Source information
Chemical mapping of a 207-nucleotide RNA with DMS and 2A3.
RNA sequence: GGGAACGACUCGAGUAGAGUCGAAAAGCACUAGAGGGCGUAACGGCUGGGUGUAACCCAACUCAAGGUGUGCUGAUUAGCGGGCUUGACUCCGUAACAAAUAGGCACUGGUGGUAAAAAGCAUCCCUGACCAUAUACAUCUUCGGAUGUAUAUGAAACAACCCAUAUUCUUCGGAAUAUGGGUUGUAAAAGAAACAACAACAACAAC
Reactivity to DMS in 0.01 (KOAc 150mM, MgCl2 10mM, bicine 150mM(pH8.5), 24C), signal-to-noise 3, nucleotides 027 to 156: g010c010a060c020u000a080g020a100g010g010g030c020g030u010a080a090c090g010g010c000u000g000g000g020u000g010u000a060a300c000c000c000a020a050c030u000c030a100a100g020g060u000g030u000g030c010u000g010a130u000u000a090g030c050g010g000g000c040u000u000g000a100c080u010c010c020g000u000a050a110c050a050a090a110u000a130g010g010c030a030c030u000g020g010u000g010g000u010a020a050a070a070a060g020c070a090u000c010c000c000u000g010a220c180c000a040u000a030u010a000c000a010u000c000u000u000c300g050g010a040u000g000u000a000u000a000u000g000a090a070
Reactivity to 2A3 in 0.01 (KOAc 150mM, MgCl2 10mM, bicine 150mM(pH8.5), 24C), signal-to-noise 3, nucleotides 027 to 156: g000c020a010c070u100a050g020a090g000g040g020c020g040u060a080a020c060g140g000c040u040g000g000g000u070g090u060a070a080c000c000c000a020a060c010u040c090a040a110g060g000u050g000u040g050c000u000g000a140u040u060a030g030c030g000g030g000c060u100u130g010a120c040u020c040c000g010u020a010a020c000a020a120a030u090a060g030g000c020a000c020u020g040g000u030g010g050u130a090a100a000a000a000g020c010a030u030c000c020c000u060g040a030c020c020a000u010a000u010a000c000a010u000c010u040u080c140g100g000a000u000g000u000a000u000a010u000g000a000a010
Reactivities are given for positions 27 through 156.
2A3 adducts were read by reverse transcription with SuperScript II with manganese.